[RMDB]
RNA sequence: GGGAACGACUCGAGUAGAGUCGAAAACAUCAGUCGUUCGCGACUGAUGAAACGUGCAACCGCUGCACGAAAAAGUCGAUCGAAUACCGAUCGACAAGCGCUAAAGAUAGGCCUUCGGGCCUAUCAAUCUGGAUAAGAUCUUCGGAUCUUAUCCAGAAAAAGAAACAACAACAACAAC
Reactivity to DMS in 0.01 (KOAc 150mM, MgCl2 10mM, bicine 150mM(pH8.5), 24C), signal-to-noise 2, nucleotides 027 to 126: c000a000u000c000a010g000u000c000g060u000u010c210g040c020g010a010c010u000g000a010u000g000a010a110a150c020g040u000g000c010a070a090c300c010g020c020u010g000c000a000c000g020a020a060a090a030a060g020u000c010g000a020u000c000g000a230a110u000a140c230c010g000a010u000c000g000a000c000a010a020g000c030g000c170u010a090a110a090g000a000u000a000g010g020c010c000u000u000c170g030g000g010c000c000u000a000u000c000a040a030
Reactivity to 2A3 in 0.01 (KOAc 150mM, MgCl2 10mM, bicine 150mM(pH8.5), 24C), signal-to-noise 2, nucleotides 027 to 126: c000a010u000c000a000g020u010c010g020u050u090c250g020c000g080a000c000u000g000a000u010g000a000a000a000c010g010u010g000c020a070a020c010c030g000c030u000g000c000a010c060g160a110a000a000a000a000g000u000c000g000a000u000c000g010a070a020u130a300c140c020g010a010u010c000g000a000c000a000a010g000c020g020c080u160a180a040a020g000a000u000a000g000g020c010c010u040u080c280g070g000g000c040c000u010a000u000c000a000a000
The data come from the RNA Mapping Database (RMDB), library M2PK50.
Chemical mapping of a 177-nucleotide RNA with DMS and 2A3.
The reactions ran in a buffer of 150 mM KOAc, 10 mM MgCl2 and 150 mM bicine (pH 8.5), at 24 C.
Reactivities are given for positions 27 through 126.